RNA sequence: GGGAACGACUCGAGUAGAGUCGAAAAAAGGAUCGUGUAGCUGAUGAUCCAUCUCUUGCCGUUGAAGUUUGGGGUAAGAAAUUUUGCAAUCCCAUUGGUCUAGCUGCUGGUUUCGAUAAACAAGCCAUGGAUUUAUGAUAUUCGUAUCAUAAAUCCAAAAAGAAACAACAACAACAAC
Reactivity to 2A3 in 0.01 (KOAc 150mM, MgCl2 10mM, bicine 150mM(pH8.5), 24C), signal-to-noise 4, nucleotides 027 to 126: a000a030g010g010a000u020c010g000u020g010u050a010g020c020u040g010a040u050g020a010u040c000c020a040u020c020u000c000u020u020g050c040c040g300u110u160g180a210a100g080u200u250u230g170g010g000g000u020a010a030g090a070a150a080u180u190u130u120g060c040a030a060u010c010c000c020a030u030u130g040g030u070c060u110a030g000c000u050g010c040u020g030g030u020u020u060c080g040a110u160a130a120a060c060a080a010g020c000c020a060
Reactivity to DMS in 0.01 (KOAc 150mM, MgCl2 10mM, bicine 150mM(pH8.5), 24C), signal-to-noise 8, nucleotides 027 to 126: a100a070g010g000a010u000c010g010u000g010u000a100g010c040u000g010a040u010g000a030u000c000c010a180u010c060u000c010u010u000g010c010c020g020u000u000g010a110a120g010u010u010u010g030g000g010g000u000a050a030g000a020a070a190u000u000u010u000g010c130a110a110u000c000c000c000a150u020u010g020g010u000c100u010a070g010c040u000g020c130u010g010g010u000u000u000c150g020a120u010a060a060a070c150a060a040g000c030c100a130